[RMDB]
RNA sequence: GGGAACGACUCGAGUAGAGUCGAAAAGAUAUGGACCAUCCAAGGGAGUCGUUCUCGGAAACGAGAAUACGACAUCGAUCUUGCGAUGGUCCUAAGUCAAAGGCCAGCGGACUUCGGUCCGCUGGCCGCUGGUAUUAGUCUUCGGACUAAUACCAGCAAAAGAAACAACAACAACAAC
Reactivity to DMS in 0.01 (KOAc 150mM, MgCl2 10mM, bicine 150mM(pH8.5), 24C), signal-to-noise 2, nucleotides 027 to 126: g000a040u000a300u000g000g000a010c010c010a020u000c000c010a000a000g010g030g000a100g010u000c010g000u000u000c000u000c000g040g000a050a060a100c000g000a050g000a050a050u010a070c050g020a000c010a220u010c230g030a140u010c000u010u000g000c200g020a010u000g000g010u000c000c000u010a000a080g000u020c020a100a140a200g040g040c000c000a050g060c100g130g010a030c010u000u000c220g030g040u000c040c000g070c040u040g030g030c020c000
Reactivity to 2A3 in 0.01 (KOAc 150mM, MgCl2 10mM, bicine 150mM(pH8.5), 24C), signal-to-noise 2, nucleotides 027 to 126: g040a010u060a020u120g000g000a000c020c000a000u020c000c010a030a010g120g150g040a140g000u010c000g010u010u010c000u010c000g010g040a040a040a010c000g020a000g020a070a130u300a300c040g030a000c030a090u300c190g180a260u110c000u040u030g010c200g020a000u020g020g000u000c000c000u000a000a000g000u000c000a030a100a050g050g000c010c000a000g000c090g030g030a010c050u210u170c300g200g020u000c000c060g000c020u020g010g020c040c000
Structure probing data (DMS and 2A3) for a 177-nucleotide construct.
For 2A3 the reverse transcriptase was SuperScript II with manganese.
Values are in units of 0.01, from 0 to 300, in steps of 10.
The RNA was probed in 150 mM KOAc, 10 mM MgCl2 and 150 mM bicine (pH 8.5) at 24 C.
Source: RMDB library TTRDES, as collected in RNAgym.
DMS adducts were read by reverse transcription with MarathonRT.